RNA sequence: GGGAACGACUCGAGUAGAGUCGAAAAGAUAUGGACAUGCGAAGAACACUUCCACUAUGAAGUCGGAAACGAUGGAGUGGAAGUGGGAGCAUGUCCUAAGUCAAAGGGUGUCCUUCGGGACACCCAAGACUAAGUAGUGCUUCGGCACUACUUAGUCAAAAGAAACAACAACAACAAC
Reactivity to DMS in 0.01 (KOAc 150mM, MgCl2 10mM, bicine 150mM(pH8.5), 24C), signal-to-noise 3, nucleotides 027 to 126: g000a030u000a300u000g000g010a010c000a010u010g010c000g010a170a180g010a130a180c010a010c000u000u000c000c000a030c000u010a160u010g000a130a170g010u000c000g030g000a120a080a180c020g000a030u000g010g000a020g020u010g000g000a030a010g010u000g000g000g010a100g000c000a000u000g010u000c000c010u000a010a050g000u000c010a070a070a130g010g000g020u000g030u000c020c010u000u000c240g010g020g000a000c000a000c000c000c000a000a010
Reactivity to 2A3 in 0.01 (KOAc 150mM, MgCl2 10mM, bicine 150mM(pH8.5), 24C), signal-to-noise 4, nucleotides 027 to 126: g030a010u080a040u180g000g000a010c000a000u010g060c030g250a300a040g020a260a000c010a000c000u010u020c040c000a000c000u300a300u300g040a040a020g010u000c000g000g020a050a040a040c020g000a010u060g010g040a010g020u000g020g000a010a000g010u000g000g010g000a000g000c000a000u000g000u000c000c000u000a020a020g020u010c030a060a030a090g010g000g000u000g010u000c000c000u030u080c300g120g000g000a000c000a000c020c000c000a000a010

Structure probing data (DMS and 2A3) for a 177-nucleotide construct. Reactivities are given for positions 27 through 126. Source: RMDB library TTRDEL, as collected in RNAgym. For DMS, 2,391 sequencing reads were counted. For DMS the reverse transcriptase was MarathonRT. The reactions ran in a buffer of 150 mM KOAc, 10 mM MgCl2 and 150 mM bicine (pH 8.5), at 24 C.